[RMDB]
RNA sequence: GGGAACGACUCGAGUAGAGUCGAAAAGAUAUUGAUCACAGCAAAUAAACAUAAUGAAAACUUCAAAUAAAACAAUUAAAGCGAGUGAUCAUGAAGAAAAUAUUUUGUAAGUACAAAGUACAAGUAAGAUACGUAAAUGGUUCGCCAUUUACGUAUCAAAAGAAACAACAACAACAAC
Reactivity to 2A3 in 0.01 (KOAc 150mM, MgCl2 10mM, bicine 150mM(pH8.5), 24C), signal-to-noise 2, nucleotides 027 to 126: g030a010u090a040u070u080g010a000u020c000a010c010a000g000c010a040a120a120u160a060a130a000c040a030u200a120a070u130g030a020a130a050a090c050u150u120c020a060a100a050u210a100a090a030a000c030a020a060u070u090a050a040a020g000c020g040a070g140u030g000a000u000c030a010u010g000a010a030g090a000a130a000a010u130a050u080u060u080u010g030u080a160a120g060u030a080c050a080a160a000g010u000a010c020a060a050g090u090a090a010
Reactivity to DMS in 0.01 (KOAc 150mM, MgCl2 10mM, bicine 150mM(pH8.5), 24C), signal-to-noise 1, nucleotides 027 to 126: g000a070u000a070u010u030g040a010u000c000a030c010a280g010c010a090a070a060u000a120a110a120c030a080u010a110a140u000g020a030a040a130a100c250u000u000c080a030a050a060u000a040a050a130a130c030a030a040u000u030a030a060a200g000c030g010a040g070u000g000a040u010c040a000u010g000a110a050g010a110a070a060a130u020a030u000u000u000u000g010u000a140a080g020u000a050c040a000a000a090g000u000a010c120a040a030g000u000a050a060
Structure probing data (2A3 and DMS) for a 177-nucleotide construct. DMS adducts were read by reverse transcription with MarathonRT. The 2A3 profile rests on 1,467 reads. For 2A3 the reverse transcriptase was SuperScript II with manganese. High DMS reactivity at an A or C suggests that its Watson-Crick edge is free.